[RMDB]
RNA sequence: GGGAACGACUCGAGUAGAGUCGAAAACAUCCUUUCUUGCCUGCACCCACUUUUCGAGGAUGUCUUCCCUUCCUCCCCUCCGGGAUUUCUUCUGAUCGGACUGGCUCAUCCUCGGAAACGGGGGCGGAUACACGUAAGUUCGCUUACGUGAAAAGAAACAACAACAACAAC
Reactivity to DMS in 0.01 (KOAc 150mM, MgCl2 10mM, bicine 150mM(pH8.5), 24C), signal-to-noise 9, nucleotides 027 to 129: c220a140u050c010c010u020u020u040c070u040u050g020c100c000u040g030c060a090c050c030c020a110c190u000u000u000u000c010g030a050g020g030a010u000g030u020c080u020u040c030c010c030u000u030c010c000u040c000c000c000c000u040c040c000g050g000g030a040u040u020u040c060u010u040c080u030g040a120u070c020g000g030a100c080u040g000g000c110u010c010a050u020c000c000u000c020g030g020a010a020a060c160g000g050g000g020g050c030g010g000a080u020a130
Reactivity to 2A3 in 0.01 (KOAc 150mM, MgCl2 10mM, bicine 150mM(pH8.5), 24C), signal-to-noise 9, nucleotides 027 to 129: c050a080u070c010c000u050u080u040c040u040u090g070c010c020u080g020c040a260c040c010c000a130c100u010u010u020u020c010g010a000g010g000a000u010g010u010c030u030u040c020c000c000u020u050c010c020u040c010c000c000c010u060c030c020g030g000g020a050u060u070u020c050u100u030c040u080g050a090u070c030g010g020a030c060u030g030g010c020u020c020a010u000c000c000u000c000g010g010a010a010a040c060g010g000g000g000g000c000g000g000a040u050a050
Description
The record gives the reactivity of an RNA of 170 nucleotides to DMS and 2A3. High 2A3 reactivity points to a flexible backbone, as in loops and unpaired stretches. The reactions ran in a buffer of 150 mM KOAc, 10 mM MgCl2 and 150 mM bicine (pH 8.5), at 24 C. For DMS the reverse transcriptase was MarathonRT. Reactivities are given for positions 27 through 129. It was measured as part of the RMDB library 15KLIB.